RNA sequence: GGGAACGACUCGAGUAGAGUCGAAAAGAUAUGGACUCUGGGAGAACCAGAUCGGAAACGAUCUGAGUUCGAAGAACAGAGGUCCUAAGUCAAAAGUAGUUUUACCUCUUCGGAGGUAAAACUACAAGGAACAUAACAAGUUCGCUUGUUAUGUUCCAAAAGAAACAACAACAACAAC
Reactivity to DMS in 0.01 (KOAc 150mM, MgCl2 10mM, bicine 150mM(pH8.5), 24C), signal-to-noise 4, nucleotides 027 to 126: g000a020u000a170u010g000g010a280c010u000c000u010g000g010g000a090g010a000a000c000c000a000g000a000u000c010g000g010a010a030a080c000g010a000u000c000u000g020a130g010u000u000c000g000a100a130g010a110a200c060a000g000a030g020g000u000c000c000u010a020a100g010u000c020a100a090a160a160g000u000a000g010u000u000u000u000a010c000c000u000c010u000u020c200g020g000a010g010g000u000a000a000a000a000c010u000a010c000a060a090
Reactivity to 2A3 in 0.01 (KOAc 150mM, MgCl2 10mM, bicine 150mM(pH8.5), 24C), signal-to-noise 2, nucleotides 027 to 126: g010a020u040a010u080g000g000a010c010u000c000u020g000g040g000a150g020a010a000c010c000a000g000a010u000c010g020g000a060a020a010c010g000a000u040c020u030g030a030g090u000u000c000g000a030a000g010a020a000c010a000g000a010g130g110u020c000c000u010a050a020g040u010c020a050a070a080a140g010u010a000g010u010u000u010u010a010c000c010u030c020u070u110c300g150g000a010g000g020u020a000a000a000a010c000u000a000c000a000a000
Background:
Chemical mapping of a 177-nucleotide RNA with DMS and 2A3. For 2A3 the reverse transcriptase was SuperScript II with manganese. For DMS, 4,179 sequencing reads were counted. Reactivities are given for positions 27 through 126. DMS adducts were read by reverse transcription with MarathonRT. The RNA was probed in 150 mM KOAc, 10 mM MgCl2 and 150 mM bicine (pH 8.5) at 24 C.